The record gives the reactivity of an RNA of 177 nucleotides to DMS and 2A3. The reactions ran in a buffer of 150 mM KOAc, 10 mM MgCl2 and 150 mM bicine (pH 8.5), at 24 C. 2A3 is a SHAPE reagent: it acylates the 2'-hydroxyl of flexible nucleotides of all four kinds. For 2A3, 2,133 sequencing reads were counted.

[RMDB]
RNA sequence: GGGAACGACUCGAGUAGAGUCGAAAACAACAAAGUAACGCUGGUGUUCCUUCAUAGAAGUCACCAAGACUUCUUCUGGAACUUCAAGGUAUUUAGCAUCAAAACUUCCCAUGAAGGCAGUUGGGUACAUUUCUUGUGAUUUCGAUCACAAGAAAUGAAAAGAAACAACAACAACAAC
Reactivity to DMS in 0.01 (KOAc 150mM, MgCl2 10mM, bicine 150mM(pH8.5), 24C), signal-to-noise 4, nucleotides 027 to 126: c080a070a130c090a080a070a070g010u010a050a060c070g020c090u000g000g000u000g010u000u000c010c000u010u010c160a070u000a000g010a000a000g030u000c000a120c230c250a090a180g000a020c000u000u000c010u000u000c090u010g000g000a020a010c000u000u000c030a060a080g010g000u000a030u000u000u010a060g000c070a050u010c120a050a050a060a090c150u000u000c000c010c010a110u020g000a110a120g010g020c080a040g010u000u000g000g000g000u010a130
Reactivity to 2A3 in 0.01 (KOAc 150mM, MgCl2 10mM, bicine 150mM(pH8.5), 24C), signal-to-noise 2, nucleotides 027 to 126: c050a020a000c020a040a130a010g080u070a120a020c090g010c260u020g010g020u050g020u050u000c020c000u080u060c020a040u030a200g010a020a000g000u010c010a020c210c110a130a050g010a010c020u000u000c000u060u020c040u030g020g010a020a020c000u170u110c080a040a020g080g010u000a050u050u150u100a040g030c020a040u100c070a110a070a020a120c030u040u030c030c000c000a020u070g060a020a050g120g000c090a030g030u060u060g030g010g000u020a020